The record gives the reactivity of an RNA of 177 nucleotides to 2A3 and DMS.
The DMS profile rests on 7,480 reads.
Values cover nucleotides 27 to 126.
For DMS the reverse transcriptase was MarathonRT.
Source: RMDB library OK1LIB, as collected in RNAgym.
For 2A3 the reverse transcriptase was SuperScript II with manganese.
The RNA was probed in 150 mM KOAc, 10 mM MgCl2 and 150 mM bicine (pH 8.5) at 24 C.

RNA sequence: GGGAACGACUCGAGUAGAGUCGAAAAGAUGAGAACAUACUGUUCAGUUGGGCUAUCAGGUGACACUCCAAUUCUUGCAGGAGGUCACGAGCAAGAGAAAGAGGACGGCCUGACUUAACAAAAGAAACAUUUUACUCAUGUUCGCAUGAGUAAAAUGAAAAGAAACAACAACAACAAC
Reactivity to 2A3 in 0.01 (KOAc 150mM, MgCl2 10mM, bicine 150mM(pH8.5), 24C), signal-to-noise 9, nucleotides 027 to 126: g140a080u240g030a030g050a110a010c020a050u230a080c040u030g000u000u000c010a000g000u000u000g000g000g000c010u020a040u130c040a070g140g040u010g010a030c130a130c160u000c000c010a080a150u190u120c110u120u270g080c070a060g010g010a010g000g000u010c000a000c010g010a020g020c060a110a030g050a020g040a130a080a000g110a060g070g080a030c040g010g000c000c000u010g010a000c000u000u000a010a000c000a000a140a000a030g090a020a050a000
Reactivity to DMS in 0.01 (KOAc 150mM, MgCl2 10mM, bicine 150mM(pH8.5), 24C), signal-to-noise 5, nucleotides 027 to 126: g010a100u020g000a120g030a070a050c070a040u020a110c120u010g000u000u000c040a030g000u020u000g000g000g010c010u010a210u010c040a080g000g020u000g010a030c030a170c010u000c000c020a060a120u050u010c110u030u020g030c120a140g000g030a110g040g000u010c030a020c030g010a130g020c170a040a050g010a100g010a090a190a120g000a090g000g010a040c070g010g000c020c000u010g010a000c030u000u010a000a000c030a040a080a100a060g000a110a040a090